[RMDB]
RNA sequence: GGGAACGACUCGAGUAGAGUCGAAAAAUCUUGCAUUUUCCAGAUUUGUAAGGUGCCUUUAGAUGCUGAUGUGUUGGCCCACCUUAAUGUUAUGAAUCCUGACAUCUUGGAGGACUGGAAUCUGGGAGGUGGUAUAUUUAUUCGUAAAUAUACCACCAAAAGAAACAACAACAACAAC
Reactivity to DMS in 0.01 (KOAc 150mM, MgCl2 10mM, bicine 150mM(pH8.5), 24C), signal-to-noise 5, nucleotides 027 to 126: a050u000c010u000u000g010c050a070u000u000u000u010c020c020a020g000a050u000u000u000g000u010a050a050g010g010u000g010c010c010u000u000u000a050g000a040u010g020c080u000g010a070u010g020u000g020u000u000g010g010c040c030c020a070c060c050u000u010a050a050u000g010u000u010a070u000g010a110a090u000c060c060u000g000a100c020a020u000c020u000u000g020g000a040g010g010a080c060u010g000g000a020a030u000c010u000g000g010g010a130
Reactivity to 2A3 in 0.01 (KOAc 150mM, MgCl2 10mM, bicine 150mM(pH8.5), 24C), signal-to-noise 4, nucleotides 027 to 126: a000u030c010u030u050g030c020a050u070u060u020u000c020c010a010g030a070u020u040u030g060u080a040a070g020g010u060g080c000c000u060u070u050a040g010a050u080g010c050u080g030a090u080g080u020g060u110u130g070g020c020c000c000a020c000c000u070u110a150a050u140g040u080u090a110u160g120a050a040u020c000c020u060g030a080c020a040u010c020u030u080g050g000a010g010g010a010c010u010g070g120a030a010u000c010u010g000g010g040a020

The record gives the reactivity of an RNA of 177 nucleotides to DMS and 2A3. The 2A3 profile rests on 3,888 reads. The DMS profile rests on 11,678 reads. DMS adducts were read by reverse transcription with MarathonRT.